[RMDB]
Notes:
Structure probing data (DMS and 2A3) for a 177-nucleotide construct. 2A3 adducts were read by reverse transcription with SuperScript II with manganese. The reactions ran in a buffer of 150 mM KOAc, 10 mM MgCl2 and 150 mM bicine (pH 8.5), at 24 C.
RNA sequence: GGGAACGACUCGAGUAGAGUCGAAAAGACUACAACUUCGGUUGUAGUCAAAUUAAAGCGUGUUCCGACUUCACGGAACAAGUACACGCAUGAAGUAUAAAAAAACCGGUUCCUUCGGGAACCGGAAGAUACUUCAUGUGUUCGCACAUGAAGUAUCAAAAGAAACAACAACAACAAC
Reactivity to DMS in 0.01 (KOAc 150mM, MgCl2 10mM, bicine 150mM(pH8.5), 24C), signal-to-noise 3, nucleotides 027 to 126: g000a000c000u010a000c010a010a010c000u000u010c190g020g000u010u000g010u000a000g000u000c000a040a060a070u010u010a090a110a090g000c020g020u000g010u000u010c010c000g020a180c190u000u000c130a120c030g010g000a020a000c050a050a050g010u010a060c180a050c040g010c020a050u000g000a050a080g020u000a060u020a000a000a100a140a070a090a110c030c000g010g010u000u000c010c000u000u010c160g040g010g010a000a000c000c000g020g000a000a010
Reactivity to 2A3 in 0.01 (KOAc 150mM, MgCl2 10mM, bicine 150mM(pH8.5), 24C), signal-to-noise 3, nucleotides 027 to 126: g000a010c000u010a000c000a010a000c000u040u080c220g120g000u000u000g000u000a000g010u000c000a010a010a000u030u020a060a010a010g010c010g010u040g010u020u030c020c010g070a110c080u250u160c130a040c120g010g020a040a030c020a010a020g030u020a040c040a010c090g000c030a010u110g120a080a040g100u130a060u260a270a170a030a040a010a010a050c000c010g010g000u000u000c000c000u050u060c190g050g000g000a010a010c000c000g000g000a000a000